Annotation
Structure probing data (2A3 and DMS) for a 177-nucleotide construct. Source: RMDB library OK2TRN, as collected in RNAgym. 2A3 adducts were read by reverse transcription with SuperScript II with manganese. DMS adducts were read by reverse transcription with MarathonRT. For 2A3, 2,181 sequencing reads were counted. 2A3 is a SHAPE reagent: it acylates the 2'-hydroxyl of flexible nucleotides of all four kinds.
RNA sequence: GGGAACGACUCGAGUAGAGUCGAAAAGCCAGGCAUGGCAGCAUGCGCCUGUAGUCCCAGCUACUUGGAAGGCUGAGGCACAAGAAUCACUUCAAUCCGAGAGGCAGAGGUUGCAGUGAGCCAAGACCGGCAGUGAAUAAUUCGUUAUUCACUGCCGAAAAGAAACAACAACAACAAC
Reactivity to 2A3 in 0.01 (KOAc 150mM, MgCl2 10mM, bicine 150mM(pH8.5), 24C), signal-to-noise 2, nucleotides 027 to 126: g040c020c020a020g010g060c040a030u070g030g000c010a010g100c040a050u030g020c040g090c030c000u050g030u050a040g080u000c030c010c010a020g000c000u060a060c030u080u150g080g020a140a040g040g000c030u030g040a070g030g020c050a020c030a090a080g100a100a050u040c000a020c090u050u010c020a030a080u030c050c020g110a090g010a100g200g110c050a020g020a030g040g020u040u020g000c030a000g010u000g040a030g000c020c010a030a060g070a100c000
Reactivity to DMS in 0.01 (KOAc 150mM, MgCl2 10mM, bicine 150mM(pH8.5), 24C), signal-to-noise 2, nucleotides 027 to 126: g000c050c040a090g030g030c050a030u010g000g000c130a100g010c050a040u000g020c110g000c060c030u030g000u000a060g000u000c000c000c010a120g000c050u010a050c080u010u000g000g010a110a090g000g020c030u000g000a090g000g010c060a030c090a080a090g000a130a090u010c040a070c030u010u000c080a060a030u000c020c020g000a100g030a190g010g010c110a070g010a110g010g010u000u010g010c060a060g010u000g000a060g000c060c060a070a070g000a150c160